RNA sequence: GGGAACGACUCGAGUAGAGUCGAAAAUCUAAUGUCUUCGGACAUUAGAAAAGCCGGAGGCUCGCACCUAGCGACCGGCGCAAGGACGCACGUGACUGCGAAAAAUCACCGAGUUCGCUCGGUGAAACCUAGUAAGAAGGUUCGCCUUCUUACUAGGAAAAGAAACAACAACAACAAC
Reactivity to 2A3 in 0.01 (KOAc 150mM, MgCl2 10mM, bicine 150mM(pH8.5), 24C), signal-to-noise 4, nucleotides 027 to 126: u010c000u000a010a000u000g000u000c000u010u020c110g080g000a000c000a010u000u010a000g000a010a140a010a010g000c000c010g000g020a040g090g130c110u030c070g010c010a080c030c070u040a040g000c010g020a030c010c000g000g000c010g000c020a030a050g110g040a020c010g030c020a010c060g110u120g140a110c070u030g000c030g070a080a020a020a030a060u040c000a000c000c010g000a000g000u050u070c160g050c080u000c000g000g000u000g000a010a000a000
Reactivity to DMS in 0.01 (KOAc 150mM, MgCl2 10mM, bicine 150mM(pH8.5), 24C), signal-to-noise 5, nucleotides 027 to 126: u000c000u000a000a010u000g000u000c000u000u020c200g020g000a020c000a000u000u010a010g000a010a080a160a150g000c010c020g000g010a300g020g020c280u000c010g010c010a080c020c030u010a160g000c020g000a070c010c000g000g000c010g010c240a070a080g000g010a170c020g000c030a030c060g000u010g010a150c170u000g000c010g010a010a060a070a050a100u000c000a000c000c000g010a010g010u000u010c190g010c000u000c010g000g000u000g000a000a030a090

Notes:
This 177-nucleotide RNA was probed chemically with 2A3 and DMS. The RNA was probed in 150 mM KOAc, 10 mM MgCl2 and 150 mM bicine (pH 8.5) at 24 C. 2A3 adducts were read by reverse transcription with SuperScript II with manganese.